[RMDB]
RNA sequence: GGGAACGACUCGAGUAGAGUCGAAAACCUCCAGAGUUCGCUCUGGAGGAAAAGCUAGCGUCCUAAUCUAUCCGGGGUUAUGGCGCGAAACUCAGGGAAAAAAAAGGUACGGCUUCGGCCGUACCAACAUUAACAGAUUGUUCGCAAUCUGUUAAUGAAAAGAAACAACAACAACAAC
Reactivity to 2A3 in 0.01 (KOAc 150mM, MgCl2 10mM, bicine 150mM(pH8.5), 24C), signal-to-noise 3, nucleotides 027 to 126: c000c000u000c000c000a010g010a000g010u060u110c150g080c090u010c000u000g010g010a000g000g000a010a020a000a020g040c050u070a020g000c000g010u020c000c010u010a000a000u020c020u040a130u110c090c060g140g000g000g000u010u010a020u040g000g020c010g000c010g010a020a010a010c050u100c100a070g100g040g100a040a040a020a010a010a000a010a090g010g000u000a000c010g000g000c010u020u070c170g080g000c000c000g010u000a000c010c000a000a010
Reactivity to DMS in 0.01 (KOAc 150mM, MgCl2 10mM, bicine 150mM(pH8.5), 24C), signal-to-noise 4, nucleotides 027 to 126: c000c000u000c000c000a010g000a020g010u000u020c190g010c000u000c000u000g000g010a010g000g000a010a010a050a050g010c060u000a270g010c000g000u010c000c030u000a020a010u000c010u000a100u010c150c190g010g000g000g000u000u000a000u000g000g000c010g000c010g000a040a060a060c030u000c060a120g010g010g020a000a000a000a050a060a060a120a150g000g010u000a010c000g000g010c000u000u010c240g020g010c000c000g000u000a000c010c000a020a030
Description: Structure probing data (2A3 and DMS) for a 177-nucleotide construct. The RNA was probed in 150 mM KOAc, 10 mM MgCl2 and 150 mM bicine (pH 8.5) at 24 C. Values cover nucleotides 27 to 126. Source: RMDB library M2PK50, as collected in RNAgym.